Source: RMDB library RNAMAK, as collected in RNAgym. Chemical mapping of a 207-nucleotide RNA with 2A3 and DMS. As a SHAPE reagent, 2A3 marks flexible, mostly unpaired nucleotides at the ribose 2'-OH. DMS adducts were read by reverse transcription with MarathonRT. The reactions ran in a buffer of 150 mM KOAc, 10 mM MgCl2 and 150 mM bicine (pH 8.5), at 24 C.

RNA sequence: GGGAACGACUCGAGUAGAGUCGAAAAGGGGUCGACUUUUGACGGGUCUGCAUGGGACGACGAUCUAUACUGAAGCCUCCACGGUAUAGGGAGUCUCUGUGAUGGACCCGAUAAGUCGACGGAGGCACCCAAACUCGAUCGGUUCGCCGAUCGAGAACUAAAUAACAACCUUCGGGUUGUUAUUUAGAAAAGAAACAACAACAACAAC
Reactivity to 2A3 in 0.01 (KOAc 150mM, MgCl2 10mM, bicine 150mM(pH8.5), 24C), signal-to-noise 3, nucleotides 027 to 156: g050g020g080g020u020c010g000a010c020u130u110u170u290g230a160c160g000g000g000u010c020u030g020c010a080u220g010g010g030a030c060g020a030c010g010a030u010c000u000a000u000a000c000u030g050a130a020g010c010c010u010c000c000a000c000g010g010u000a000u000a010g000g000g000a000g000u000c030u000c000u040g030u020g060a300u170g060g000a000c000c000c000g000a000u010a000a000g000u000c000g000a000c010g000g000a000g010g000c000a030c000c010c000a050a070a140c000u000c010g000a000u000c000g000g040u110u090c290g040c100c000g000a000u000c000g000a000g000a000a000
Reactivity to DMS in 0.01 (KOAc 150mM, MgCl2 10mM, bicine 150mM(pH8.5), 24C), signal-to-noise 2, nucleotides 027 to 156: g000g000g020g030u000c000g000a000c000u000u000u000u000g020a170c130g040g030g000u010c000u070g000c030a060u000g020g030g000a050c020g010a060c100g020a210u000c010u000a020u010a040c010u000g000a030a150g010c000c000u000c010c020a300c030g010g000u000a020u000a020g000g010g010a260g010u000c010u000c010u000g030u000g000a130u000g020g020a020c000c000c010g020a010u010a010a060g000u010c010g020a020c000g000g000a010g080g040c000a140c020c010c020a100a140a210c010u000c000g020a010u010c010g010g000u000u010c300g040c030c000g030a020u000c010g000a000g000a030a200